[RMDB]
RNA sequence: GGGAACGACUCGAGUAGAGUCGAAAACACGAAGGUUGGCUAAUCCUGGUCGGACAUCAGGGGGUUAGUGCAUUGGCAUAAGCCAGCUUGGCGCUAAUAGAUACUAAUCGUAGCAUAGCUGAAUAAACGCUACGAUAGUAUUCGUACUAUCGUAGCGAAAAGAAACAACAACAACAAC
Reactivity to 2A3 in 0.01 (KOAc 150mM, MgCl2 10mM, bicine 150mM(pH8.5), 24C), signal-to-noise 5, nucleotides 027 to 126: c110a010c100g080a120a020g110g030u070u070g030g000c000u030a010a050u050c000c000u000g010g040u070c090g130g030a030c010a020u040c030a030g000g010g010g050g000u000u030a010g010u000g040c010a020u050u080g020g000c020a030u050a300a030g000c000c020a030g070c090u120u190g040g000c000g000c010u010a020a010u020a130g070a060u060a010c030u040a040a020u030c020g070u040a010g060c030a080u090a050g060c040u050g040a050a010u150a150a110a030
Reactivity to DMS in 0.01 (KOAc 150mM, MgCl2 10mM, bicine 150mM(pH8.5), 24C), signal-to-noise 4, nucleotides 027 to 126: c110a110c150g000a110a080g000g000u010u000g010g000c000u000a040a150u060c020c010u000g010g000u000c170g020g030a300c130a010u000c060a010g000g020g000g030g020u000u000a010g020u010g000c040a090u010u020g000g010c030a110u030a070a190g010c010c020a060g050c160u020u030g000g010c000g000c010u000a040a010u000a100g000a100u010a020c020u000a020a030u000c020g000u020a030g010c040a080u020a030g000c030u010g020a090a080u030a050a090a100